[RMDB]
RNA sequence: GGGAACGACUCGAGUAGAGUCGAAAAGACUGCGUGCACUAGAGACGAUAUCGAGCCGGAAAUUAAUCGAUAAUGUCUCAAGUAGUGGAUACGAUCCGGCAAGUAUCGACUACGUGUGCUCGUAGGACGACCCUCAGGCUUUCGAGCCUGAGGGUCGAAAAGAAACAACAACAACAAC
Reactivity to 2A3 in 0.01 (KOAc 150mM, MgCl2 10mM, bicine 150mM(pH8.5), 24C), signal-to-noise 1, nucleotides 027 to 126: g000a010c010u000g000c000g070u000g010c000a000c000u040a040g000a000g000a040c030g000a030u000a000u030c000g020a010g000c010c000g030g070a200a150a000u220u130a050a130u190c000g000a000u040a030a090u250g000u000c000u020c000a030a000g000u030a000g010u030g110g000a000u000a050c000g040a050u050c000c010g000g000c080a100a020g000u010a000u040c030g090a000c000u030a020c020g000u010g000u010g000c000u000c020g000u000a000g000g000a000
Structure probing data (2A3) for a 177-nucleotide construct. For 2A3, 784 sequencing reads were counted. Reactivities are given for positions 27 through 126. Values are in units of 0.01, from 0 to 300, in steps of 10. For 2A3 the reverse transcriptase was SuperScript II with manganese.